[RMDB]
RNA sequence: GGGAACGACUCGAGUAGAGUCGAAAAGCUUAAUAACCUGCGCUGAGCCCUUCUCCUCCAGCUUGCCUGUGUCCUAGGGAAUUGGAAGGUCAUCCUUCACAGGAUCGUGUGGAAGUCCUGCUCGGGGUCCAAACAUGGUAAUUCGUUACCAUGUUAAGCCUAGUUACUCAUUCGUGAGUAACUAGGCAAAAGAAACAACAACAACAAC
Reactivity to 2A3 in 0.01 (KOAc 150mM, MgCl2 10mM, bicine 150mM(pH8.5), 24C), signal-to-noise 4, nucleotides 027 to 156: g010c030u130u160a080a010u100a130a180c000c030u070g030c040g020c040u040g010a040g010c050c000c000u050u050c050u050c020c010u000c030c020a030g000c050u090u140g050c010c010u050g010u020g040u090c020c040u040a060g040g000g030a070a090u080u080g080g010a090a040g030g000u050c020a040u060c030c010u070u100c050a020c010a080g020g020a070u040c060g050u050g020u050g110g030a060a030g030u040c020c020u040g020c010u010c020g010g000g000g010u030c010c020a040a020a000c000a000u000g000g010u010a020a020u020u040c100g060u040u000a000c000c000a000u000g000u000u020a050a000
Reactivity to DMS in 0.01 (KOAc 150mM, MgCl2 10mM, bicine 150mM(pH8.5), 24C), signal-to-noise 1, nucleotides 027 to 156: g020c030u000u010a130a120u000a020a110c040c030u010g000c100g020c040u000g000a110g000c010c030c020u000u000c030u000c020c020u000c040c020a030g020c040u000u000g020c010c020u000g010u000g010u010c040c050u000a140g090g040g020a050a150u010u000g010g000a040a070g050g000u000c070a090u020c000c000u010u000c050a100c010a050g000g030a080u000c080g000u010g010u010g040g020a130a070g010u000c030c020u010g050c030u000c060g020g000g030g000u010c030c030a060a020a020c000a010u020g000g030u010a010a090u000u000c230g040u000u010a000c000c020a020u000g010u000u000a050a100